[RMDB]
RNA sequence: GGGAACGACUCGAGUAGAGUCGAAAAUUGUAAGUAUACAUAUAUGCAUAAUAUCAUGUGUUUUGAUUUCUGAAUGGAAUCAUAAGGCUCAUGACAGCAAACCUAGCUCAGUGCCUGGAACAUAGUAGAUGUUGAACAAUAAUGGAUGAAUGAAUGAGAUCGACAACAAUUUCGAUUGUUGUCGAUCAAAAGAAACAACAACAACAAC
Reactivity to 2A3 in 0.01 (KOAc 150mM, MgCl2 10mM, bicine 150mM(pH8.5), 24C), signal-to-noise 2, nucleotides 027 to 156: u070u030g010u010a000a030g010u050a100u180a120c030a010u110a000u040a020u170g010c000a050u060a250a060u070a210u060c000a010u090g000u040g080u010u040u120u000g010a040u020u000u050c040u020g170a100a140u280g000g000a000a000u000c020a010u060a170a090g040g000c000u000c000a070u040g050a050c030a000g000c000a030a030a030c000c040u010a040g000c000u000c090a010g020u010g050c000c000u000g010g000a060a000c030a000u030a040g040u000a010g010a040u040g010u060u060g080a120a040c090a110a050u190a080a040u160g030g090a040u040g060a070a080u160g010a040a010u060g000a130
Reactivity to DMS in 0.01 (KOAc 150mM, MgCl2 10mM, bicine 150mM(pH8.5), 24C), signal-to-noise 1, nucleotides 027 to 156: u010u010g010u000a110a110g050u000a180u000a040c060a130u010a150u000a050u000g010c060a100u000a070a130u000a070u000c040a030u000g000u000g000u010u000u010u010g000a020u000u000u000c000u000g010a250a190u000g000g020a050a010u000c000a040u000a160a120g000g050c000u000c000a040u010g000a060c000a010g030c060a060a150a110c060c030u000a060g000c080u000c070a090g020u000g030c030c000u020g000g010a080a060c090a040u000a150g010u000a050g030a010u000g010u000u000g020a090a160c000a090a080u000a050a090u000g050g020a070u010g020a060a070u000g020a110a070u010g000a240

Chemical mapping of a 207-nucleotide RNA with 2A3 and DMS. For DMS the reverse transcriptase was MarathonRT. For 2A3, 614 sequencing reads were counted.